[RMDB]
This 177-nucleotide RNA was probed chemically with DMS and 2A3. 2A3 adducts were read by reverse transcription with SuperScript II with manganese. For DMS the reverse transcriptase was MarathonRT.
RNA sequence: GGGAACGACUCGAGUAGAGUCGAAAAUAGAAGAGGAGUCUCCUGGACGCUUCCGCCCGCUCGGGAUGGGCCUCAGUGCCGACGAGGAGUCCGCAGGUGGGAGGAUCAGCCACCGGAGAGGGACGCGCUAAGAUUACAGGUUCGCCUGUAAUCUUAGAAAAGAAACAACAACAACAAC
Reactivity to DMS in 0.01 (KOAc 150mM, MgCl2 10mM, bicine 150mM(pH8.5), 24C), signal-to-noise 3, nucleotides 027 to 126: u010a090g010a090a060g000a110g020g000a180g000u000c020u000c020c050u020g040g000a080c150g000c040u000u000c010c020g000c020c010c020g000c050u000c070g000g010g020a030u010g010g020g020c000c000u020c070a130g000u010g020c070c090g010a090c090g010a040g010g010a260g000u010c010c050g010c090a090g010g010u000g010g000g000a030g000g020a010u000c180a100g000c010c160a190c050c040g000g010a050g000a070g010g010g010a080c060g000c170g010
Reactivity to 2A3 in 0.01 (KOAc 150mM, MgCl2 10mM, bicine 150mM(pH8.5), 24C), signal-to-noise 2, nucleotides 027 to 126: u120a000g040a090a020g050a060g070g030a070g140u000c010u030c030c050u070g070g010a040c040g010c050u040u010c010c000g010c000c000c010g010c040u040c050g090g000g000a050u040g060g120g070c040c000u050c080a130g030u120g170c050c030g070a080c060g000a020g050g030a020g020u000c000c030g020c060a020g000g040u010g020g000g010a040g020g000a020u070c050a010g030c000c000a040c010c020g000g000a030g010a020g010g000g020a010c020g020c000g000